This 177-nucleotide RNA was probed chemically with DMS. DMS adducts were read by reverse transcription with MarathonRT.
RNA sequence: GGGAACGACUCGAGUAGAGUCGAAAACAGGAAUGGCGGGACCCCACUUCAUCAGGGUCCGCGCUCCAUCCUUUCUUACCUGAUGGCCGGCAUGGUCCCAGCCUCCUCGCUGGCGCCGGCUGGGCAACACUCUUGCUACGUUCGCGUAGCAAGAGUGAAAAGAAACAACAACAACAAC
Reactivity to DMS in 0.01 (KOAc 150mM, MgCl2 10mM, bicine 150mM(pH8.5), 24C), signal-to-noise 1, nucleotides 027 to 126: c180a030g000g000a070a060u000g000g000c010g000g000g020a020c020c000c020c060a160c300u020u010c180a050u010c180a110g010g020g010u000c000c000g010c020g020c050u000c150c060a060u000c000c000u000u020u000c060u000u000a070c060c020u000g010a160u020g020g010c010c020g000g010c020a120u030g030g000u000c300c000c000a010g010c000c040u010c190c070u000c240g000c010u000g000g000c090g020c000c020g000g000c050u000g000g020g020c100a000a150

The RNA was probed in 150 mM KOAc, 10 mM MgCl2 and 150 mM bicine (pH 8.5) at 24 C.